Structure probing data (DMS and 2A3) for a 177-nucleotide construct.
Values cover nucleotides 27 to 126.
It was measured as part of the RMDB library M2PK50.
The reactions ran in a buffer of 150 mM KOAc, 10 mM MgCl2 and 150 mM bicine (pH 8.5), at 24 C.
For 2A3, 5,911 sequencing reads were counted.
For DMS, 1,816 sequencing reads were counted.
RNA sequence: GGGAACGACUCGAGUAGAGUCGAAAAGUACCCUUGUUCGCAAGGGUACAAAGACAGACUUCACUGUCAUAAAGAAGGAAACAUCUCAGUUACAAUAAGAGAAAAGCACCUACUUCGGUAGGUGCAAGCAAUAAUGCUUCUUCGGAAGCAUUAUUGCAAAAGAAACAACAACAACAAC
Reactivity to DMS in 0.01 (KOAc 150mM, MgCl2 10mM, bicine 150mM(pH8.5), 24C), signal-to-noise 1, nucleotides 027 to 126: g010u000a000c010c000c000u000u000g000u000u010c190g020c000a010a010g000g000g000u010a010c000a030a080a090g020a060c010a020g040a050c050u000u010c020a040c000u020g020u000c160a080u000a010a110a060g000a010a020g000g000a180a070a040c040a080u000c030u000c000a090g020u000u000a090c290a040a090u000a040a180g000a030g000a050a090a090a110g000c000a010c010c000u010a010c010u000u000c120g010g010u000a000g010g000u000g010c000a000a060
Reactivity to 2A3 in 0.01 (KOAc 150mM, MgCl2 10mM, bicine 150mM(pH8.5), 24C), signal-to-noise 4, nucleotides 027 to 126: g000u000a000c000c000c000u000u010g060u020u040c180g010c110a000a000g000g000g010u000a000c000a000a010a000g040a010c010a010g030a050c020u070u030c100a050c110u030g030u070c020a020u260a040a090a020g080a040a030g080g060a070a050a020c040a100u030c000u000c020a090g020u090u090a060c050a100a060u100a220a030g030a000g030a050a050a030a020g000c000a000c000c000u000a010c000u030u100c240g070g000u000a010g000g010u000g000c000a000a010